[RMDB]
Chemical mapping of a 177-nucleotide RNA with 2A3 and DMS. DMS (dimethyl sulfate) methylates the pairing face of unpaired adenines and cytosines. For DMS, 17,869 sequencing reads were counted. The data come from the RNA Mapping Database (RMDB), library OK2TRN. The reactions ran in a buffer of 150 mM KOAc, 10 mM MgCl2 and 150 mM bicine (pH 8.5), at 24 C.

RNA sequence: GGGAACGACUCGAGUAGAGUCGAAAACGUUACCGCCGGCGGCGGCUGUUCAUUCGUCGGCGCAGGCCCAGCAGGCCCCGACGCAGAGGCCCAGCGCGGCGUGCAGGGCCUUGGCCACGUGCGCCGCCGCUCUUCAUUGUUUCGACAAUGAAGAGCGAAAAGAAACAACAACAACAAC
Reactivity to 2A3 in 0.01 (KOAc 150mM, MgCl2 10mM, bicine 150mM(pH8.5), 24C), signal-to-noise 5, nucleotides 027 to 126: c020g030u050u090a070c020c040g040c020c040g130g050c090g030g020c030g070g010c090u120g080u170u120c090a120u110u110c030g040u020c060g040g010c020g010c030a030g010g000c000c030c020a030g060c040a010g050g020c000c010c010c050g030a070c040g000c050a040g050a120g220g050c030c010c000a060g060c040g000c020g020g000c020g000u020g020c030a030g000g030g020c000c020u050u130g070g000c000c000a010c020g050u040g010c020g020c000c000g000c000
Reactivity to DMS in 0.01 (KOAc 150mM, MgCl2 10mM, bicine 150mM(pH8.5), 24C), signal-to-noise 9, nucleotides 027 to 126: c070g010u010u010a090c090c020g030c120c070g010g020c070g020g010c050g010g020c060u000g020u000u010c110a140u010u010c030g020u000c080g010g020c100g020c080a060g000g010c010c020c090a110g010c090a100g000g010c000c020c040c040g000a120c050g010c060a080g000a120g010g010c020c020c070a130g010c080g010c090g010g010c010g010u000g010c010a090g000g000g010c000c010u000u010g010g010c000c010a060c060g020u000g010c020g010c000c000g010c030